[RMDB]
RNA sequence: GGGAACGACUCGAGUAGAGUCGAAAAGAUAUGGAGGUUCCCAGCUUUUGACGGUCACAGGUCGGAAACGACCUGAAUGACCGAUAAGCUGCACCUCCUAAGUCAAACGUUUGGUUCGCCAAACGAACAGCGAACACUAGUUCGCUAGUGUUCGCUGAAAAGAAACAACAACAACAAC
Reactivity to DMS in 0.01 (KOAc 150mM, MgCl2 10mM, bicine 150mM(pH8.5), 24C), signal-to-noise 4, nucleotides 027 to 126: g000a050u000a300u010g000g000a020g010g000u000u010c170c300c010a030g000c010u000u010u000u000g030a150c070g020g010u010c000a040c000a000g010g000u010c000g010g000a080a120a260c010g020a020c000c000u010g000a080a090u000g000a010c000c000g020a060u010a010a020g000c000u000g070c210a020c000c000u000c000c000u010a010a100g010u010c040a100a080a290c060g000u000u000u010g000g010u000u000c300g060c000c010a010a010a010c000g000a120a160
Reactivity to 2A3 in 0.01 (KOAc 150mM, MgCl2 10mM, bicine 150mM(pH8.5), 24C), signal-to-noise 3, nucleotides 027 to 126: g030a040u070a040u150g010g000a020g020g030u080u070c070c090c000a000g000c020u130u150u120u290g300a180c050g000g000u000c010a000c010a040g000g020u000c030g010g000a060a070a060c000g000a010c000c000u020g030a030a040u030g000a000c000c000g010a010u010a000a000g000c010u020g000c060a010c000c000u000c000c010u020a070a010g040u020c050a160a030a100c020g010u030u000u000g110g000u060u050c290g050c090c000a010a000a020c010g000a090a030
Structure probing data (DMS and 2A3) for a 177-nucleotide construct. In probing experiments dimethyl sulfate is read out at A N1 and C N3, which are open when not base-paired. For 2A3, 5,887 sequencing reads were counted. It was measured as part of the RMDB library TTRDES. 2A3 adducts were read by reverse transcription with SuperScript II with manganese.